[RMDB]
RNA sequence: GGGAACGACUCGAGUAGAGUCGAAAACGCAGUCAGUGCCGCCGUCAUCGGAAGCUCCCGAGUCACAGGAGUCUUCGAGAGCUUCGAGGAAUCCAUCGAUCGUGGACAAGUUCGCCCGCCGAACGAAGUCAUAGGGGUGGUUCGCCACCCCUAUGACAAAAGAAACAACAACAACAAC
Reactivity to DMS in 0.01 (KOAc 150mM, MgCl2 10mM, bicine 150mM(pH8.5), 24C), signal-to-noise 3, nucleotides 027 to 126: c120g000c070a070g000u010c050a110g030u010g000c050c050g000c060c050g020u000c050a070u000c000g020g000a070a050g030c050u010c020c010c000g020a070g040u000c070a070c080a220g010g010a090g010u000c010u000u000c000g000a020g010a120g000c080u010u000c020g000a080g010g000a060a090u010c010c010a110u010c120g000a080u000c070g020u010g010g000a030c080a100a150g010u000u000c040g000c030c030c070g040c150c060g010a030a060c060g020a130a120
Reactivity to 2A3 in 0.01 (KOAc 150mM, MgCl2 10mM, bicine 150mM(pH8.5), 24C), signal-to-noise 1, nucleotides 027 to 126: c050g040c010a000g010u080c010a020g100u030g120c010c030g020c040c020g020u020c030a070u040c030g090g010a000a000g000c000u020c010c000c010g050a050g000u110c060a050c060a150g090g130a140g070u040c020u070u040c020g010a000g000a050g010c000u070u000c040g000a030g000g030a050a010u040c030c000a030u030c060g070a000u020c040g050u070g040g000a010c010a070a060g010u030u060c020g020c020c050c000g070c050c010g030a040a030c030g030a080a010